RNA sequence: GGGAACGACUCGAGUAGAGUCGAAAAAUAAGCUCUAUGAUGUUAUUUUACAUAUGUUAGACUAAUGAAAUGAUUUGAUUGUAAUUUAGUAACUGAGCUUAUAAAGUAUUUGUCUUCGGACAAAUACCUUAUCGUUCCAGUUCGCUGGAACGAUAAGAAAAGAAACAACAACAACAAC
Reactivity to DMS in 0.01 (KOAc 150mM, MgCl2 10mM, bicine 150mM(pH8.5), 24C), signal-to-noise 2, nucleotides 027 to 126: a040u000a000a000g000c000u000c010u010a300u010g000a180u000g000u000u010a010u000u010u000u000a020c000a040u020a090u000g010u000u000a060g010a080c070u000a050a110u010g000a120a080a080u000g010a030u010u010u000g000a090u020u000g000u000a000a010u000u000u000a010g010u010a020a060c080u000g020a000g010c000u000u000a000u000a030a040a150g000u000a010u000u000u000g000u000c010u000u030c190g010g000a000c010a000a020a010u000a000c000
Reactivity to 2A3 in 0.01 (KOAc 150mM, MgCl2 10mM, bicine 150mM(pH8.5), 24C), signal-to-noise 2, nucleotides 027 to 126: a000u010a010a000g000c020u030c010u040a120u140g090a110u070g060u050u000a030u010u040u010u010a000c000a000u120a010u200g040u070u090a060g040a020c020u050a110a180u220g100a180a040a060u090g040a060u120u130u080g030a050u050u060g000u000a020a020u000u010u060a010g020u000a040a000c030u010g000a000g000c000u030u010a050u040a030a040a000g000u000a020u010u000u000g000u000c000u010u010c180g020g000a000c000a000a000a000u010a000c000